[RMDB]
RNA sequence: GGGAACGACUCGAGUAGAGUCGAAAAGGUCAGGCCUGAUCGGAAACAGCAGCAGGUGAGUCCGCAUUAUGUGAAGGAUCGGCUGAAACACGAGGAAAUACUGAGCCAACGCAAGACGGUAGCCGAAAAAAUCUAGUUCACUUCGGUGAACUAGAAACUUCACCAGCAUGUUCGCAUGCUGGUGAAGAAAAGAAACAACAACAACAAC
Reactivity to 2A3 in 0.01 (KOAc 150mM, MgCl2 10mM, bicine 150mM(pH8.5), 24C), signal-to-noise 1, nucleotides 027 to 156: g170g020u050c050a050g010g100c000c000u100g090a050u130c030g040g090a130a000a000c050a020g000c000a000g040c020a020g010g010u010g060a010g000u020c010c010g020c080a010u020u120a100u230g050u030g080a080a040g090g010a080u080c120g000g000c020u010g000a030a080a000c080a010c070g020a060g070g050a020a140a070u180a060c020u030g020a060g010c010c090a020a000c090g000c080a060a000g010a030c000g000g060u040a010g050c010c000g000a030a000a000a000a000a000u020c010u000a010g000u030u000c000a050c000u050u000c200g040g000u000g000a000a000c000u000a000g020a000a000a000